[RMDB]
RNA sequence: GGGAACGACUCGAGUAGAGUCGAAAAGGGGUCGGACGUGGUUUGAGACAUGCUGUGUACUGAAGCCUCCACGGUACGACAGCAACAGCUCAAACGUAACAUCGUCCGACGGAGGCACCCAAACUACCUGUCAAGCCUUCGGGCUUGACAGGUAGAAUCUAGUUUAGUAGUUCGCUACUAAACUAGAAAAAGAAACAACAACAACAAC
Reactivity to 2A3 in 0.01 (KOAc 150mM, MgCl2 10mM, bicine 150mM(pH8.5), 24C), signal-to-noise 4, nucleotides 027 to 156: g210g000g020g010u000c000g000g000a000c000g000u020g000g010u010u000u000g020a020g020a090c140a150u040g000c000u000g000u000g000u010a000c000u000g020a120a020g010c000c000u000c000c020a010c020g000g000u020a040c050g090a020c230a000g000c020a010a110c090a140g050c010u010c000a000a000a000c000g000u030a010a010c020a160u150c010g000u000c000c000g000a010c010g000g000a010g000g000c010a040c010c000c010a030a100a030c000u000a000c000c000u000g000u000c000a010a010g020c000c000u070u110c290g030g010g000c000u000u010g000a000c000a000g000g000u000a000g000a000a000
Reactivity to DMS in 0.01 (KOAc 150mM, MgCl2 10mM, bicine 150mM(pH8.5), 24C), signal-to-noise 2, nucleotides 027 to 156: g030g030g030g020u000c020g010g020a040c010g040u000g030g000u000u000u000g000a040g040a120c070a180u000g010c020u010g030u010g020u000a040c000u000g000a020a120g010c010c000u000c000c010a300c040g000g000u010a000c000g010a080c010a030g010c010a060a120c070a110g000c000u000c010a020a010a000c000g000u010a060a060c090a060u000c010g000u000c000c000g000a000c000g000g020a010g130g060c030a140c010c010c010a090a120a190c000u000a020c040c000u000g000u000c000a030a000g000c010c010u000u010c280g060g030g050c010u010u010g000a000c000a000g000g000u000a000g010a050a070
Chemical mapping of a 207-nucleotide RNA with 2A3 and DMS. It was measured as part of the RMDB library RNAMAK. High DMS reactivity at an A or C suggests that its Watson-Crick edge is free. The RNA was probed in 150 mM KOAc, 10 mM MgCl2 and 150 mM bicine (pH 8.5) at 24 C. For DMS, 6,099 sequencing reads were counted.